Structure probing data (2A3 and DMS) for a 207-nucleotide construct.
For 2A3, 1,150 sequencing reads were counted.
The reactions ran in a buffer of 150 mM KOAc, 10 mM MgCl2 and 150 mM bicine (pH 8.5), at 24 C.
The data come from the RNA Mapping Database (RMDB), library OK3TST.
RNA sequence: GGGAACGACUCGAGUAGAGUCGAAAAUACCAGCAGAGGCUUUCGGAAGAGUUCUUCGGGUCGGAUCGGACGCAGAUACCCAAGUCCAGUGGCUCCAAUCCGAACUGACCGCUACCCGCGAUCUAUACAGCAAGUGCAUGGUUCCAAAGGCUGAGUAUCACACUUAUUUCUUCGGAAAUAAGUGUGAAAAAGAAACAACAACAACAAC
Reactivity to 2A3 in 0.01 (KOAc 150mM, MgCl2 10mM, bicine 150mM(pH8.5), 24C), signal-to-noise 2, nucleotides 027 to 156: u080a010c010c000a000g040c040a020g020a040g010g010c010u050u100u190c090g080g060a100a030g030a100g050u080u060c030u050u100c040g030g020g000u030c000g000g020a030u020c030g010g000a030c060g000c050a010g040a070u170a140c000c020c030a010a090g060u040c040c060a060g010u090g110g010c010u000c030c000a010a020u020c020c000g000a010a030c020u010g060a060c000c000g030c020u040a070c010c010c000g100c030g030a010u000c010u110a030u060a160c040a030g030c030a010a110g020u070g020c020a070u050g040g030u050u020c030c000a040a080a030g040g000c030u020g060a010g060u040a050
Reactivity to DMS in 0.01 (KOAc 150mM, MgCl2 10mM, bicine 150mM(pH8.5), 24C), signal-to-noise 1, nucleotides 027 to 156: u000a150c020c040a100g010c030a080g030a090g040g010c000u000u000u000c040g040g010a170a200g010a070g010u010u000c030u000u000c040g000g020g000u000c010g020g000a050u010c040g020g010a050c050g000c040a100g030a130u000a110c060c020c030a240a120g010u000c070c050a130g020u020g030g000c040u000c020c010a060a070u010c010c010g020a050a060c010u010g000a050c040c010g040c020u000a090c020c020c030g050c140g010a050u010c030u020a120u010a160c010a030g000c070a060a120g020u000g010c080a040u010g030g020u010u000c020c020a060a140a070g000g020c040u000g020a170g020u000a150